About this RNA:
An RNA of 207 nucleotides, treated with 2A3 and read out base by base. The RNA was probed in 150 mM KOAc, 10 mM MgCl2 and 150 mM bicine (pH 8.5) at 24 C. It was measured as part of the RMDB library M2RFPK.
RNA sequence: GGGAACGACUCGAGUAGAGUCGAAAAAGUGAGUAUGGCUUGUUACGACGAGCCAUACUCACAACGGUUUUCCUAAAUCGUCGUGAGACGGACCUUGGAAAACCUAGUAUUUAAAUAACUAGGUCAAAUUAGCCUAGAUCCUUCGGGAUCUAGGCAAGUCCCUUGUAUCGUUCGCGAUACAAGGGACAAAAGAAACAACAACAACAAC
Reactivity to 2A3 in 0.01 (KOAc 150mM, MgCl2 10mM, bicine 150mM(pH8.5), 24C), signal-to-noise 2, nucleotides 027 to 156: a010g000u000g000a000g010u000a000u000g000g000c000u020u000g000u050u080a110c250g010a000c000g010a090g000c000c000a000u000a000c010u000c000a000c000a000a000c010g000g000u000u000u000u000c000c000u000a000a000a000u040c000g000u010c000g020u030g090a140g010a020c000g000g000a010c000c000u000u030g000g000a000a020a000a000c000c000u000a000g020u000a020u070u090u130a120a180a120u170a090a010c120u050a020g020g000u010c030a000a100a170u150u120a040g000c000c000u000a010g010a020u010c000c010u010u010c110g070g000g000a010u030c000u000a000g000g000c000a000a000